An RNA of 207 nucleotides, treated with DMS and 2A3 and read out base by base.
The data come from the RNA Mapping Database (RMDB), library OK3TST.
[RMDB]
RNA sequence: GGGAACGACUCGAGUAGAGUCGAAAAUUGAUCGUGGACUUCCCAGUCUCCAGAAUCAUGAGCGAUACAUUUCUGUUGUUUAUAAGCUAUUUAGUUUAUGGUAUUUUAACUACCCAGAUGGACCUAAGGCAAUAGAAAAGACGUAAGUCUGAUUUGAUAGAAUAGGCUGAUUCGUCAGCCUAUUCUAAAAAGAAACAACAACAACAAC
Reactivity to DMS in 0.01 (KOAc 150mM, MgCl2 10mM, bicine 150mM(pH8.5), 24C), signal-to-noise 2, nucleotides 027 to 156: u000u010g000a110u000c110g040u000g030g010a150c080u000u000c030c020c000a300g010u000c010u020c030c010a120g010a080a040u000c020a040u000g030a120g020c030g020a090u010a090c050a120u000u000u010c040u000g000u000u000g010u000u000u000a090u000a080a090g010c010u000a070u010u000u000a060g020u000u000u000a090u020g020g010u000a020u010u000u010u010a110a090c050u010a010c020c000c080a090g020a070u000g030g010a080c010c040u000a070a210g020g000c010a020a060u000a070g010a030a040a090a050g000a060c080g000u000a050a130g010u000c000u010g000a080u000u000u000g000a260
Reactivity to 2A3 in 0.01 (KOAc 150mM, MgCl2 10mM, bicine 150mM(pH8.5), 24C), signal-to-noise 2, nucleotides 027 to 156: u110u080g090a100u170c050g070u110g040g020a020c020u030u010c020c000c080a020g010u030c010u000c060c010a040g020a090a010u020c020a100u160g020a040g080c010g050a040u010a090c030a040u030u020u000c020u000g000u020u000g000u000u200u000a130u040a090a000g000c010u050a080u040u140u070a140g050u050u240u090a060u080g010g010u010a100u010u190u010u060a150a100c090u060a020c000c010c030a050g020a000u020g020g020a070c020c030u000a020a020g020g020c020a000a030u030a060g090a000a000a000a000g130a030c050g030u060a040a000g070u000c030u010g020a020u010u060u060g040a040
Conditions: 150 mM KOAc, 10 mM MgCl2 and 150 mM bicine (pH 8.5), 24 C.